[RMDB]
RNA sequence: GGGAACGACUCGAGUAGAGUCGAAAAGGGACUGUAGUGAGGGUUUAAAAGAUCACGUGAUGGUUAAAUCUGUUAGAUAAGUUUCAAAGUUUUAAACAUGUCUUUGACAUUUGUCAAAUUAACUGACAUUCCAUUUUCUUUUCAUCUGCAAAUUACAGGAUAUGGUAAUGUUCGCAUUACCAUAUCCAAAAGAAACAACAACAACAAC
Reactivity to 2A3 in 0.01 (KOAc 150mM, MgCl2 10mM, bicine 150mM(pH8.5), 24C), signal-to-noise 4, nucleotides 027 to 156: g000g010g030a020c030u020g030u060a040g000u040g030a060g020g010g010u040u040u070a040a050a010a000g030a040u090c040a020c090g030u050g000a030u010g000g020u020u030a050a040a060u060c010u010g010u030u010a010g010a020u020a040a040g000u010u040u050c010a050a030a010g010u000u000u200u300a100a130a060c130a120u160g060u020c000u030u000u020g010a010c010a010u030u050u070g010u000c010a060a090a170u110u060a040a030c030u030g010a010c010a020u110u070c040c000a030u060u060u060u050c030u060u080u050u040c050a080u030c040u060g050c050a090a060a110u150u100a150c080a040
Reactivity to DMS in 0.01 (KOAc 150mM, MgCl2 10mM, bicine 150mM(pH8.5), 24C), signal-to-noise 2, nucleotides 027 to 156: g000g000g010a110c040u000g010u020a090g000u010g000a090g020g030g030u000u000u000a050a040a090a080g030a070u020c020a080c130g040u000g030a070u000g030g020u000u000a010a050a080u020c090u000g020u000u000a100g010a100u010a030a080g010u000u000u020c010a000a030a070g000u000u010u020u030a040a180a160c120a070u000g000u000c000u000u000u000g000a030c040a160u000u000u000g000u000c030a040a050a130u000u030a090a070c030u000g000a050c040a230u000u000c030c030a160u000u000u000u000c030u000u000u000u000c040a070u010c050u010g010c030a040a050a120u000u010a020c110a190

The record gives the reactivity of an RNA of 207 nucleotides to 2A3 and DMS.
High 2A3 reactivity points to a flexible backbone, as in loops and unpaired stretches.
Reactivities are given for positions 27 through 156.
2A3 adducts were read by reverse transcription with SuperScript II with manganese.